[RMDB]
Background: An RNA of 177 nucleotides, treated with DMS and read out base by base. DMS adducts were read by reverse transcription with MarathonRT. For DMS, 583 sequencing reads were counted. It was measured as part of the RMDB library OK2TST.
RNA sequence: GGGAACGACUCGAGUAGAGUCGAAAACAACCAAUGACAGCAAUUCCGUCACGCGACGUUUGACCUCGUCUUUCGGUGUGUUGUCCAGCUCCAGCGGCAGAGCCACGUUGCCAAAAACAGUACGCGAUACCCAACCGCAUUUCGAUGCGGUUGGGUAAAAAGAAACAACAACAACAAC
Reactivity to DMS in 0.01 (KOAc 150mM, MgCl2 10mM, bicine 150mM(pH8.5), 24C), signal-to-noise 1, nucleotides 027 to 126: c030a060a140c040c050a060a100u000g060a010c020a000g020c000a070a140u000u000c090c000g080u000c020a060c160g060c060g000a050c060g000u000u000u000g000a080c300c140u000c090g000u020c060u000u000u000c080g020g000u000g040u000g000u020u000g000u000c020c050a050g020c000u000c020c020a020g010c030g000g040c040a090g000a070g000c060c050a140c140g080u000u020g020c060c050a000a020a150a040a090c120a120g000u000a140c100g000c050g010a110